RNA sequence: GGGAACGACUCGAGUAGAGUCGAAAAGAUAUGGAAGGAGAGGGUAUUCACUGCGUUGAAAUCGGAAACGAUGGAGCAGUGACUUUUCCCUCCCUUCCUAAGUCAAACUGCUAGUUCGCUAGCAGAAGAUGUGCCUAAUCUUCGGAUUAGGCACAUCAAAAGAAACAACAACAACAAC
Reactivity to DMS in 0.01 (KOAc 150mM, MgCl2 10mM, bicine 150mM(pH8.5), 24C), signal-to-noise 2, nucleotides 027 to 126: g010a000u010a300u000g000g000a010a020g000g010a100g010a020g000g010g030u010a040u000u000c000a000c000u000g000c010g020u000u010g010a070a150a010u000c000g000g000a130a060a250c000g020a010u000g000g000a130g010c000a020g010u020g010a000c210u000u000u000u020c000c000c000u000c000c000c000u000u000c000c000u000a010a050g020u010c000a100a100a210c010u000g010c000u000a010g000u000u000c250g020c000u010a010g000c010a000g000a050a110
Reactivity to 2A3 in 0.01 (KOAc 150mM, MgCl2 10mM, bicine 150mM(pH8.5), 24C), signal-to-noise 2, nucleotides 027 to 126: g020a000u080a040u100g000g060a010a020g030g060a300g000a010g100g030g000u040a050u020u040c000a010c010u000g000c010g210u300u050g090a080a080a000u000c000g000g000a040a040a030c030g010a000u030g020g020a030g000c010a010g000u020g010a000c000u070u060u130u060c000c000c000u000c000c000c000u000u030c000c010u000a000a000g000u000c030a000a070a100c000u000g010c000u000a010g050u120u070c300g010c150u000a000g000c020a000g020a010a050